[RMDB]
RNA sequence: GGGAACGACUCGAGUAGAGUCGAAAAUGUGUUUUCAUAACCUCCCUGGGUGUGGGGCUUCUCAGUGGCUGCUGCAGCGUGGAGCUGGAAAGGAGGGAAGUGGGAGCCGCCCUGUGUAGAAACACCAUGGGCACUUGCUGUUCUUACUGAGAUUCCACUCGCUAAAUCGAUUCGUCGAUUUAGCGAGAAAAGAAACAACAACAACAAC
Reactivity to 2A3 in 0.01 (KOAc 150mM, MgCl2 10mM, bicine 150mM(pH8.5), 24C), signal-to-noise 1, nucleotides 027 to 156: u070g120u000g090u090u030u060u200c290a230u140a170a170c000c020u040c030c000c000u010g030g070g020u070g030u060g000g050g020g000c010u210u080c020u010c020a020g020u030g150g000c020u020g010c020u060g040c010a020g020c000g090u090g120g100a070g030c030u010g000g060a180a090a060g050g030a030g000g000g000a040a040g010u080g070g000g010a010g000c000c080g000c010c030c000u000g010u000g000u010a060g230a170a280a010c010a000c040c050a060u140g000g020g010c030a050c080u080u110g000c020u020g080u080u050c000u010u040a070c020u060g010a010g000a050u130u070c100c050a040